[RMDB]
RNA sequence: GGGAACGACUCGAGUAGAGUCGAAAAGCAACGGACGGAACGCUGAAAAUCCAGGUCUCUUUGCAGAUCGGGAUAAAGACAGAUGACAGCCACGAUUGGACCAAGCUGCGCUAUAUGGAUAGCCAUAGUGCAGGAUAUUAUUCGUAAUAUCCUGCACAAAAGAAACAACAACAACAAC
Reactivity to DMS in 0.01 (KOAc 150mM, MgCl2 10mM, bicine 150mM(pH8.5), 24C), signal-to-noise 5, nucleotides 027 to 126: g020c050a080a070c050g000g000a060c050g000g000a110a080c120g010c040u010g000a090a080a090a050u000c000c010a060g010g020u000c000u010c020u010u010u010g020c170a020g000a020u000c000g010g000g000a010u000a030a080a110g000a160c100a020g000a070u000g010a150c110a080g000c020c030a040c070g000a100u010u000g010g000a100c040c030a050a120g000c080u000g020c110g020c020u000a030u000a100u000g000g000a120u000a080g010c030c040a050u010a070
Reactivity to 2A3 in 0.01 (KOAc 150mM, MgCl2 10mM, bicine 150mM(pH8.5), 24C), signal-to-noise 4, nucleotides 027 to 126: g020c010a010a050c030g030g080a010c020g040g010a100a010c040g000c030u020g030a050a060a040a020u000c010c000a010g010g010u000c000u000c010u060u290u260g010c110a000g000a010u010c010g000g010g000a020u030a030a110a010g060a010c020a020g080a050u070g040a060c040a010g010c000c000a020c050g070a110u030u120g030g020a020c010c020a020a010g010c060u070g020c040g000c050u030a020u010a040u280g140g040a100u090a050g010c000c030a070u120a070